Structure probing data (DMS and 2A3) for a 177-nucleotide construct. The RNA was probed in 150 mM KOAc, 10 mM MgCl2 and 150 mM bicine (pH 8.5) at 24 C.
RNA sequence: GGGAACGACUCGAGUAGAGUCGAAAAGGAUCGCUAUUCGACGGUGAUCUGGCUGCUGGGCGGCAACUUGCUGGUGCGCUCGGCCGGAUUCGGCUAUCCGUUCCUAGCCUACCACGUGGCUGGACGAACCCCAUUGCGUAUUCGUACGCAAUGGGGUAAAAGAAACAACAACAACAAC
Reactivity to DMS in 0.01 (KOAc 150mM, MgCl2 10mM, bicine 150mM(pH8.5), 24C), signal-to-noise 2, nucleotides 027 to 126: g010g000a020u000c020g000c020u010a200u000u000c110g010a110c150g000g000u020g000a010u010c010u010g010g030c050u010g010c080u020g030g010g020c020g010g010c010a050a060c060u010u000g010c270u000g020g010u000g020c030g000c000u000c030g000g000c070c050g020g020a190u000u020c090g010g000c060u000a090u010c100c010g010u000u000c020c020u000a010g000c010c030u000a120c090c090a090c170g020u010g010g030c030u000g030g010a110c140g010a070
Reactivity to 2A3 in 0.01 (KOAc 150mM, MgCl2 10mM, bicine 150mM(pH8.5), 24C), signal-to-noise 3, nucleotides 027 to 126: g030g000a040u040c040g000c030u070a110u130u230c110g070a060c080g070g020u050g000a020u010c010u020g070g000c040u070g000c020u020g030g040g030c030g040g110c070a050a060c070u100u230g070c100u200g050g100u040g060c030g000c010u010c000g010g030c010c010g020g030a060u060u080c040g000g000c010u020a080u100c040c010g010u030u000c000c000u000a030g000c000c010u060a100c010c060a090c130g080u110g010g000c030u020g100g020a020c070g040a050

Values cover nucleotides 27 to 126. For 2A3 the reverse transcriptase was SuperScript II with manganese.